[RMDB]
RNA sequence: GGGAACGACUCGAGUAGAGUCGAAAAAUCGCCUUGAUUGGAGCAGGAGCCAUCGGUUCCACCCUUGCUCACCUCACUGGUCUCAAGGAACUCGGAGACGUUGUGCUCUUCGAUGUGGUACCUGACAAAAGUUGCCCUAUUUCGAUAGGGCAACUUUAAAAGAAACAACAACAACAAC
Reactivity to DMS in 0.01 (KOAc 150mM, MgCl2 10mM, bicine 150mM(pH8.5), 24C), signal-to-noise 1, nucleotides 027 to 126: a140u020c080g020c040c010u000u030g000a130u020u020g010g010a080g030c120a030g030g000a090g000c080c070a140u000c130g000g010u010u000c000c000a180c060c020c020u000u000g000c090u000c110a090c030c000u010c300a070c160u010g010g000u010c230u000c040a010a010g000g010a050a080c110u000c050g000g010a010g000a000c010g000u000u000g000u000g030c110u000c000u000u000c010g000a030u020g000u000g000g000u000a030c030c010u000g030a120c230a170
Structure probing data (DMS) for a 177-nucleotide construct. The RNA was probed in 150 mM KOAc, 10 mM MgCl2 and 150 mM bicine (pH 8.5) at 24 C. The DMS profile rests on 871 reads. The data come from the RNA Mapping Database (RMDB), library OK2TRN.